[RMDB]
RNA sequence: GGGAACGACUCGAGUAGAGUCGAAAAGUACAGUCGAAUCAUACAAGAAAAUGCUAACAAGACUCCUGAAUCCCAUUGACGUAGCACUUAAGAAGAUGAAAAAUGCAGUCUCGGACAAGGCUCCAGAAAAGCUAGGCAACGUCAAGUUCUGGGGGGCCUUUGGUACUCCAUUCGUGGAGUACCAAAGAAAAGAAACAACAACAACAAC
Reactivity to DMS in 0.01 (KOAc 150mM, MgCl2 10mM, bicine 150mM(pH8.5), 24C), signal-to-noise 1, nucleotides 027 to 156: g000u010a140c060a080g030u020c020g020a100a280u000c030a080u000a200c020a150a190g010a070a110a150a090u000g000c000u020a080a090c030a040a250g010a030c000u000c030c000u050g000a130a050u010c000c000c000a150u000u000g030a090c060g000u000a030g080c000a140c090u000u000a060a160g040a040a080g000a070u000g000a030a070a050a130a060u020g020c040a040g020u000c030u000c000g000g050a060c110a100a130g000g000c000u000c020c000a220g000a120a010a020a020g000c030u000a050g000g000c030a070a050c060g020u000c000a020a060g030u000u010c040u000g000g000g000g050g030g000c150
Reactivity to 2A3 in 0.01 (KOAc 150mM, MgCl2 10mM, bicine 150mM(pH8.5), 24C), signal-to-noise 2, nucleotides 027 to 156: g050u050a010c050a010g080u010c010g040a090a030u060c020a040u100a150c080a070a040g060a110a150a010a090u090g010c070u090a110a060c020a100a020g020a040c000u050c020c030u070g040a050a040u030c030c010c000a000u000u060g000a000c000g000u030a000g020c020a050c200u070u040a110a020g070a090a050g080a190u200g090a160a080a040a020a070u100g000c010a010g050u000c010u020c050g070g010a030c020a150a020g050g000c030u010c010c020a010g030a030a120a020a020g020c050u080a030g060g030c010a030a000c000g020u020c010a000a020g050u080u070c050u080g000g000g000g000g000g000c030